[RMDB]
RNA sequence: GGGAACGACUCGAGUAGAGUCGAAAAGAUAUGGACUGUGUGGUAGCAAGGAUAGUUCGGAAACGAAGUCUGAUGACCUACGUAACAUCACAGUCCUAAGUCAAACGUACUUCUUCGGAAGUACGAAUCACUGUUGGCUGUUCGCAGCCAACAGUGAAAAAGAAACAACAACAACAAC
Reactivity to DMS in 0.01 (KOAc 150mM, MgCl2 10mM, bicine 150mM(pH8.5), 24C), signal-to-noise 2, nucleotides 027 to 126: g000a050u000a300u000g020g000a010c000u010g000u010g010u000g010g010u000a040g000c090a030a190g000g010a070u010a100g010u000u000c000g010g000a110a090a180c000g000a030a070g000u010c000u040g000a100u030g000a100c300c010u000a010c040g010u010a040a110c150a040u010c000a000c000a000g010u000c010c000u010a020a040g010u010c040a040a100a190c020g010u000a000c000u000u000c000u000u010c170g020g010a060a000g000u000a000c000g000a030a070
Reactivity to 2A3 in 0.01 (KOAc 150mM, MgCl2 10mM, bicine 150mM(pH8.5), 24C), signal-to-noise 2, nucleotides 027 to 126: g020a020u070a020u140g050g000a000c010u020g000u000g020u020g090g050u090a030g030c090a150a240g040g010a030u040a140g300u030u000c000g010g030a000a050a030c000g000a010a010g020u000c010u050g120a260u100g040a130c010c000u010a020c070g090u080a070a060c040a230u230c000a030c000a000g010u000c000c000u000a090a010g040u040c040a180a000a030c020g000u000a000c010u020u000c020u010u040c280g100g000a010a000g000u000a000c000g010a030a010
An RNA of 177 nucleotides, treated with DMS and 2A3 and read out base by base. The reactions ran in a buffer of 150 mM KOAc, 10 mM MgCl2 and 150 mM bicine (pH 8.5), at 24 C. DMS adducts were read by reverse transcription with MarathonRT. The data come from the RNA Mapping Database (RMDB), library TTRDEL. For DMS, 1,448 sequencing reads were counted.